The record gives the reactivity of an RNA of 177 nucleotides to DMS and 2A3.
It was measured as part of the RMDB library OK2TRN.
The RNA was probed in 150 mM KOAc, 10 mM MgCl2 and 150 mM bicine (pH 8.5) at 24 C.
For 2A3 the reverse transcriptase was SuperScript II with manganese.
For DMS the reverse transcriptase was MarathonRT.

[RMDB]
RNA sequence: GGGAACGACUCGAGUAGAGUCGAAAAAAGGUUAAACCGGAUGCGCUAUGGGAUAACGGACGCAUGACCUGUAUGCGCUGGAAUUCUGCUACCGAUUUGCCGGUUGUGUUCCGCGUUAUGCCGGACGGAUCAUGCAAGCAUUCGUGCUUGCAUGAUCAAAAGAAACAACAACAACAAC
Reactivity to DMS in 0.01 (KOAc 150mM, MgCl2 10mM, bicine 150mM(pH8.5), 24C), signal-to-noise 4, nucleotides 027 to 126: a070a080g000g020u000u010a020a040a080c020c010g010g010a200u000g000c020g030c150u010a110u010g000g000g000a070u000a080a200c050g020g000a090c030g030c020a020u000g010a100c160c090u010g010u010a060u000g000c000g020c010u000g010g010a110a020u000u000c050u000g000c050u020a220c030c040g000a090u010u010u010g010c040c030g000g010u000u000g010u000g010u000u000c020c020g010c070g010u000u000a070u010g000c090c040g010g000a120c190g000
Reactivity to 2A3 in 0.01 (KOAc 150mM, MgCl2 10mM, bicine 150mM(pH8.5), 24C), signal-to-noise 2, nucleotides 027 to 126: a000a040g090g000u040u050a000a120a070c000c010g000g010a020u060g000c010g020c080u120a120u300g030g030g020a060u050a170a030c050g020g160a070c010g000c010a020u060g070a070c000c020u020g020u160a010u120g020c020g020c020u000g000g030a010a030u070u050c040u090g040c000u040a080c010c010g050a080u060u010u110g080c050c000g050g000u040u090g000u010g010u020u030c010c000g000c000g030u060u080a110u210g120c040c030g020g000a010c030g020